RNA sequence: GGGAACGACUCGAGUAGAGUCGAAAAGGAUCAUCGCCGGUGCCCCUCCGUUCCCUCAGCCAGGAUUCCAGCACCUUGGCGGUUUCCCGCCGUAGCGGUGUGGUGCGAUGUUUGCGGCCCUUGCCCUCGCUCGAUCACGAUUCGUCGUGAUCGAGCGAAAAGAAACAACAACAACAAC
Reactivity to 2A3 in 0.01 (KOAc 150mM, MgCl2 10mM, bicine 150mM(pH8.5), 24C), signal-to-noise 2, nucleotides 027 to 126: g110g000a100u050c040a070u110c100g020c000c030g000g030u000g030c000c000c010c000u000c000c010g030u050u030c000c000c030u060c020a030g000c000c000a060g030g050a040u170u000c000c040a020g040c020a100c020c020u060u210g120g000c000g000g000u020u040u000c040c010c000g010c020c000g050u050a070g180c050g020g000u020g050u020g080g050u010g000c010g040a000u000g110u140u030u150g130c000g000g000c000c000c010u000u090g060c000c010c030u020